Record summary: The record gives the reactivity of an RNA of 177 nucleotides to DMS and 2A3. The DMS profile rests on 1,149 reads. For DMS the reverse transcriptase was MarathonRT. For 2A3, 1,562 sequencing reads were counted. The reactions ran in a buffer of 150 mM KOAc, 10 mM MgCl2 and 150 mM bicine (pH 8.5), at 24 C.
RNA sequence: GGGAACGACUCGAGUAGAGUCGAAAAGGCCUCGCUGGUCCUUUUUUACACGGGCGUGUCGCGCGAGUCGGCCAAGAUCAUUCAGGACCAGAGCGACAACGUGGUGUCGCACAAGACCGCGGCAAUACGUCAUUAGUCGUUUCGACGACUAAUGACGAAAAGAAACAACAACAACAAC
Reactivity to DMS in 0.01 (KOAc 150mM, MgCl2 10mM, bicine 150mM(pH8.5), 24C), signal-to-noise 2, nucleotides 027 to 126: g000g030c030c030u000c160g000c040u000g020g000u000c010c000u030u000u020u050u000u000a090c200a110c090g010g020g000c020g050u000g000u000c030g010c080g000c110g000a090g010u000c050g020g000c040c010a030a090g040a200u000c170a140u010u000c060a050g020g010a030c020c020a070g000a070g000c020g000a020c030a050a060c140g040u000g000g010u000g030u010c020g000c020a160c160a100a040g020a030c190c080g010c050g010g000c080a050a040u000a090
Reactivity to 2A3 in 0.01 (KOAc 150mM, MgCl2 10mM, bicine 150mM(pH8.5), 24C), signal-to-noise 2, nucleotides 027 to 126: g050g020c020c020u020c020g070c050u020g040g020u040c000c000u100u190u010u050u180u120a130c100a070c080g130g010g000c080g040u120g040u060c010g000c000g000c050g110a050g050u030c010g020g030c030c000a040a010g110a040u230c150a090u170u160c130a030g050g000a040c020c000a000g000a000g080c010g030a030c010a050a000c030g050u060g030g060u030g050u020c000g040c030a060c030a040a030g040a030c040c020g000c000g030g010c010a010a060u140a070
Reactivities are given for positions 27 through 126.